Structure probing data (2A3 and DMS) for a 177-nucleotide construct.
The reactions ran in a buffer of 150 mM KOAc, 10 mM MgCl2 and 150 mM bicine (pH 8.5), at 24 C.
It was measured as part of the RMDB library OK2TRN.
For DMS the reverse transcriptase was MarathonRT.
For DMS, 2,489 sequencing reads were counted.
Reactivities are given for positions 27 through 126.
2A3 adducts were read by reverse transcription with SuperScript II with manganese.
[RMDB]
RNA sequence: GGGAACGACUCGAGUAGAGUCGAAAAUGCGUGCUGUGAUUGCCGAAUCCUUCGAGAGGAUUCACAGAACCAAUCUGAUCGGAAUGGGGGUCCUUCCUCUUCAGUUCGUUGAUGGCGCCAAUGCCGCUACCCUACGCUAGUUCGCUAGCGUAGGGUAAAAAGAAACAACAACAACAAC
Reactivity to 2A3 in 0.01 (KOAc 150mM, MgCl2 10mM, bicine 150mM(pH8.5), 24C), signal-to-noise 2, nucleotides 027 to 126: u120g000c000g070u060g020c010u070g060u090g090a090u130u130g020c030c050g000a040a020u010c020c010u080u250c100g160a110g010a000g220g010a020u010u000c020a020c000a030g040a010a030c020c030a010a080u050c010u060g010a040u050c020g000g050a040a050u110g030g020g010g000g020u110c050c000u130u030c010c030u040c000u000u020c000a030g030u000u030c030g040u080u100g030a100u110g020g000c000g020c050c050a060a070u120g060c000c020g000c000
Reactivity to DMS in 0.01 (KOAc 150mM, MgCl2 10mM, bicine 150mM(pH8.5), 24C), signal-to-noise 3, nucleotides 027 to 126: u000g000c040g020u000g000c020u010g000u010g020a060u020u000g010c050c060g010a040a020u000c010c040u000u010c200g000a180g020a080g010g000a030u010u010c020a120c110a080g000a080a100c110c080a070a080u000c060u000g010a050u010c060g000g000a060a060u010g020g000g010g020g000u020c080c090u000u010c010c010u000c040u000u010c070a040g010u000u000c070g020u010u010g010a110u010g020g000c030g000c040c070a060a120u010g040c030c020g020c070